The data come from the RNA Mapping Database (RMDB), library OK2TRN. Chemical mapping of a 177-nucleotide RNA with DMS and 2A3. 2A3 adducts were read by reverse transcription with SuperScript II with manganese. The DMS profile rests on 5,447 reads. For DMS the reverse transcriptase was MarathonRT. Reactivities are given for positions 27 through 126.
RNA sequence: GGGAACGACUCGAGUAGAGUCGAAAAUCGGUGGUUGGUGCCGGCAGCAUCAUCUCGGCGGCCUCGGUGCGUAAUUCGGUGCUGUCGUCGAACGUCGUGGUCGACGACGGCGCGAUCGUUGAGGGCAAUUUACCACCGGAUUCGUCCGGUGGUAAAUAAAAGAAACAACAACAACAAC
Reactivity to DMS in 0.01 (KOAc 150mM, MgCl2 10mM, bicine 150mM(pH8.5), 24C), signal-to-noise 3, nucleotides 027 to 126: u000c050g010g020u000g010g000u000u000g000g020u000g020c060c030g020g010c110a070g010c040a040u000c100a090u000c030u000c050g010g010c050g020g000c030c020u010c060g010g010u010g010c030g000u010a090a090u000u010c030g020g010u010g020c000u000g000u000c000g010u010c000g010a020a040c030g010u010c270g010u010g010g010u000c000g020a030c000g010a020c000g010g000c020g000c010g000a030u000c040g010u000u000g010a090g010g000g000c110a090
Reactivity to 2A3 in 0.01 (KOAc 150mM, MgCl2 10mM, bicine 150mM(pH8.5), 24C), signal-to-noise 2, nucleotides 027 to 126: u090c010g040g050u010g020g000u080u090g000g020u040g000c060c020g060g020c030a000g020c010a040u070c010a060u050c070u030c060g120g010c000g000g000c060c020u030c060g060g010u160g030c030g050u060a050a140u160u090c030g050g030u130g010c000u010g020u000c010g000u010c000g000a000a010c030g130u240c080g160u300g140g010u020c010g000a000c000g000a010c050g000g010c000g010c000g000a040u040c000g000u030u070g020a060g000g040g000c020a000
Conditions: 150 mM KOAc, 10 mM MgCl2 and 150 mM bicine (pH 8.5), 24 C.